Conditions: 150 mM KOAc, 10 mM MgCl2 and 150 mM bicine (pH 8.5), 24 C.
An RNA of 177 nucleotides, treated with 2A3 and read out base by base.
For 2A3, 1,097 sequencing reads were counted.
Values cover nucleotides 27 to 126.
Source: RMDB library TTRDEL, as collected in RNAgym.

[RMDB]
RNA sequence: GGGAACGACUCGAGUAGAGUCGAAAAGAUAUGGAGAACGAACUACAUCGUACACAACGAAGAACUCGGAAACGAGGGAGUUGUGGCGAUGCGUUCUCCUAAGUCAAAAGCACACUUCGGUGUGCAACACGCGUAGUCGGUUCGCCGACUACGCGUGAAAAGAAACAACAACAACAAC
Reactivity to 2A3 in 0.01 (KOAc 150mM, MgCl2 10mM, bicine 150mM(pH8.5), 24C), signal-to-noise 1, nucleotides 027 to 126: g050a000u070a030u060g030g020a030g010a000a000c010g020a040a020c090u200a090c300a000u000c000g110u300a280c030a000c000a000a080c010g200a300a100g010a050a020c010u040c000g070g000a040a070a050c030g000a000g000g000g080a050g040u000u040g000u020g000g050c020g000a020u030g000c030g000u020u000c000u000c000c000u030a040a010g030u020c010a000a000a020a200g040c000a010c000a000c000u040u070c300g050g000u000g010u020g050c000a010a000